[RMDB]
RNA sequence: GGGAACGACUCGAGUAGAGUCGAAAAAAUACCAUCCUUGCUCUGCGAUGGCCGUCGAACACAUACACUUGAGAAUUCUGAGUGAGGGUACUGUAGCAUCGGGUUACUGUACACCAAUCCAGACGAUUCGUAUAUCAAGCUUCGGCUUGAUAUACGAAAAAGAAACAACAACAACAAC
Reactivity to DMS in 0.01 (KOAc 150mM, MgCl2 10mM, bicine 150mM(pH8.5), 24C), signal-to-noise 3, nucleotides 027 to 126: a010a090u000a090c030c030a080u000c030c030u000u010g000c050u000c050u000g000c060g010a070u000g000g000c030c030g010u000c030g010a090a130c140a100c060a140u030a080c100a060c130u020u000g000a190g010a100a110u010u010c020u000g030a100g000u000g020a300g000g000g000u000a000c000u000g040u040a010g070c020a300u030c170g000g050g010u000u000a000c030u010g010u000a000c010a110c000c030a030a180u040c000c010a030g010a070c190g000a080u000
Reactivity to 2A3 in 0.01 (KOAc 150mM, MgCl2 10mM, bicine 150mM(pH8.5), 24C), signal-to-noise 6, nucleotides 027 to 126: a000a000u220a030c010c000a030u030c010c010u020u080g050c020u030c020u080g020c030g070a060u040g050g000c010c000g070u050c020g060a110a020c040a000c000a080u180a060c050a060c080u060u100g010a010g040a140a160u150u000c000u020g060a070g120u010g010a030g010g000g000u000a010c000u040g000u010a000g010c020a070u240c210g270g040g040u010u000a000c000u010g000u020a000c220a130c020c010a010a010u010c010c020a010g020a030c020g060a060u010